RNA sequence: GGGAACGACUCGAGUAGAGUCGAAAAACACGUGCUCCAAAAGAGCACAGAGUCGUGCAAAUGACUGGCUCGACAGAUGCACGACAAAUCGAGCCAUGAAAAGACAGCGGGAAAACCGCUGUCGAAACGACAUGUUGGUCUUCGGACCAGCAUGUCGAAAAGAAACAACAACAACAAC
Reactivity to 2A3 in 0.01 (KOAc 150mM, MgCl2 10mM, bicine 150mM(pH8.5), 24C), signal-to-noise 9, nucleotides 027 to 126: a000c100a010c070g000u000g000c000u000c010c000a030a030a020a040g010a000g000c020a000c000a000g030a010g000u020c010g000u000g010c020a020a080a170u170g070a090c050u020g010g000c010u020c020g020a020c020a040g080a050u050g000c010a010c030g040a010c070a010a060a010u070c020g000a000g020c010c010a080u180g090a050a050a010a030g000a000c000a000g000c000g010g020g040a050a200a070a140c000c000g000c000u000g000u000c000g000a000a000a000
Reactivity to DMS in 0.01 (KOAc 150mM, MgCl2 10mM, bicine 150mM(pH8.5), 24C), signal-to-noise 5, nucleotides 027 to 126: a080c110a150c180g000u000g030c000u010c000c040a110a060a170a300g000a010g000c000a010c000a110g010a110g000u010c000g000u000g000c020a040a070a110u020g000a150c130u000g010g010c010u020c010g000a030c080a060g010a280u030g000c030a030c050g000a040c070a020a060a090u010c030g000a030g000c000c040a090u010g000a090a020a100a090g000a000c000a010g020c000g000g000g010a160a040a080a130c010c000g010c020u020g000u000c000g000a000a040a100